[RMDB]
RNA sequence: GGGAACGACUCGAGUAGAGUCGAAAAAGGCUGAGUUGGGAGGAUCGCUUGAGCCCAGGAGUUUGAGGCUACAUUGAGCUGUGAUUGCACCACUGCACUCUAGCCUGGGCGACAGAGACAGACCCUGCUGUAGAGAGACCUUCGGGUCUCUCUACAGAAAAGAAACAACAACAACAAC
Reactivity to DMS in 0.01 (KOAc 150mM, MgCl2 10mM, bicine 150mM(pH8.5), 24C), signal-to-noise 2, nucleotides 027 to 126: a070g020g000c060u010g000a060g010u020u000g020g010g010a060g010g000a070u010c040g000c050u000u000g000a300g030c030c010c010a030g000g010a070g010u010u000u010g040a050g010g010c000u030a060c180a090u000u010g010a070g000c060u000g030u000g010a160u000u020g010c070a140c120c050a040c110u000g000c090a080c030u000c030u000a050g000c000c030u000g010g010g010c000g000a130c150a050g010a070g010a060c080a110g020a170c020c000c010u010g000

Chemical mapping of a 177-nucleotide RNA with DMS. Reactivities are rounded to 0.1 and cut off at 0 and 3. It was measured as part of the RMDB library OK2TRN. DMS (dimethyl sulfate) methylates the pairing face of unpaired adenines and cytosines. The reactions ran in a buffer of 150 mM KOAc, 10 mM MgCl2 and 150 mM bicine (pH 8.5), at 24 C.